[RMDB]
RNA sequence: GGGAACGACUCGAGUAGAGUCGAAAAGAUAUGGAACCAACGUUCAACAGCGUACGGUAUCGGAAACGAUAUUACGACAUGAAUUGGUUCCUAAGUCAAAAGUAGCAUGGCUUCGGCCAUGCUACAAGUAUGUUGUCCAGUUCGCUGGACAACAUACAAAAGAAACAACAACAACAAC
Reactivity to 2A3 in 0.01 (KOAc 150mM, MgCl2 10mM, bicine 150mM(pH8.5), 24C), signal-to-noise 3, nucleotides 027 to 126: g030a000u040a010u080g000g020a010a000c010c010a040a020c300g150u100u030c060a230a200c060a300g050c010g040u040a070c160g150g030u010a020u000c000g000g000a030a000a000c000g000a000u010a010u030u040a020c110g160a130c130a300u120g000a020a040u040u010g020g010u000u000c000c010u000a020a020g030u000c010a000a020a080a240g000u000a000g020c000a000u010g020g000c010u140u100c300g070g000c000c000a000u000g000c010u010a000c010a000a010
Reactivity to DMS in 0.01 (KOAc 150mM, MgCl2 10mM, bicine 150mM(pH8.5), 24C), signal-to-noise 3, nucleotides 027 to 126: g000a010u010a090u000g000g000a020a010c000c000a010a070c300g000u000u000c010a080a290c300a110g000c000g000u010a050c300g020g020u000a000u000c000g000g000a030a020a040c010g030a010u000a000u000u020a010c000g020a100c090a060u000g030a050a170u000u000g000g000u000u000c010c000u000a000a080g010u010c010a120a070a130a090g020u000a000g000c010a010u000g010g010c000u000u020c210g040g000c000c000a010u000g010c010u000a000c010a030a120